[RMDB]
RNA sequence: GGGAACGACUCGAGUAGAGUCGAAAAACAAGGACAUGUCCAUAAAACCACAUUUUCUGCGACAACUCCGAAUGUUUGCGAAGCGCAACACUAUAGAACACGAUAUUUUUGAUGUUGACGUGGACGAACCCGUAAUGGGAUUCGUCCCAUUACGGGUAAAAGAAACAACAACAACAAC
Reactivity to DMS in 0.01 (KOAc 150mM, MgCl2 10mM, bicine 150mM(pH8.5), 24C), signal-to-noise 6, nucleotides 027 to 126: a070c130a100a120g010g010a050c140a110u020g010u000c010c030a040u020a060a040a060a120c050c110a130c170a170u010u000u010u010c040u000g010c060g020a030c030a040a100c190u010c030c020g030a130a080u020g000u010u010u020g000c080g000a130a070g000c090g000c050a060a040c080a060c060u000a060u020a060g020a050a050c070a050c090g010a060u020a040u020u010u010u010u000g010a080u000g010u000u000g010a070c160g000u020g010g000a110c120g020a090
Reactivity to 2A3 in 0.01 (KOAc 150mM, MgCl2 10mM, bicine 150mM(pH8.5), 24C), signal-to-noise 9, nucleotides 027 to 126: a000c050a050a050g030g010a020c020a110u080g030u020c010c000a010u110a040a110a010a060c080c050a090c040a110u050u060u050u020c030u030g020c030g020a020c020a080a050c040u030c030c010g080a130a120u110g110u090u060u090g110c120g080a110a030g020c030g010c050a020a040c020a020c040u050a040u060a230g070a090a020c040a030c100g080a080u030a140u240u110u030u070u120g130a160u160g010u010u010g040a100c030g000u020g020g030a040c060g040a040

Structure probing data (DMS and 2A3) for a 177-nucleotide construct. The RNA was probed in 150 mM KOAc, 10 mM MgCl2 and 150 mM bicine (pH 8.5) at 24 C. The DMS profile rests on 11,771 reads. DMS adducts were read by reverse transcription with MarathonRT. Reactivities are rounded to 0.1 and cut off at 0 and 3. Values cover nucleotides 27 to 126.